Source information: The record gives the reactivity of an RNA of 177 nucleotides to DMS and 2A3. The reactions ran in a buffer of 150 mM KOAc, 10 mM MgCl2 and 150 mM bicine (pH 8.5), at 24 C. Reactivities are given for positions 27 through 126.
[RMDB]
RNA sequence: GGGAACGACUCGAGUAGAGUCGAAAAGCAUCUUGCUUCGGCAAGAUGCAAAUAACGGUCAGUGCUUCCAGCUAGUCGUAAAUGCUAACUGGCCUUACGCUAAAACGAAUGCGUUCGCGCAUUCGAACCUGUAGCGUCAGUUCGCUGACGCUACAGGAAAAGAAACAACAACAACAAC
Reactivity to DMS in 0.01 (KOAc 150mM, MgCl2 10mM, bicine 150mM(pH8.5), 24C), signal-to-noise 2, nucleotides 027 to 126: g010c010a050u000c000u000u000g000c000u000u000c270g030g000c000a020a000g030a010u000g040c010a000a030a020u000a060a100c120g010g060u000c010a050g030u000g030c140u010u000c090c020a080g050c050u030a030g000u000c140g020u020a080a070a180u010g000c020u000a070a010c020u000g000g000c120c090u000u000a010c070g000c160u010a080a080a030a100c060g000a010a000u000g020c000g020u000u020c240g000c000g020c000a000u010u000c000g000a040a120
Reactivity to 2A3 in 0.01 (KOAc 150mM, MgCl2 10mM, bicine 150mM(pH8.5), 24C), signal-to-noise 2, nucleotides 027 to 126: g020c000a000u010c000u000u000g020c030u050u050c140g090g010c010a000a000g000a000u000g000c000a010a000a000u050a030a010c040g000g030u020c020a000g000u010g050c040u130u080c020c010a020g020c060u050a050g140u100c060g100u120a050a180a040u220g000c000u040a070a050c000u020g000g020c000c000u010u050a030c050g000c070u140a010a000a050a060c010g000a000a000u000g000c000g010u060u000c220g000c010g000c060a010u000u000c000g000a010a070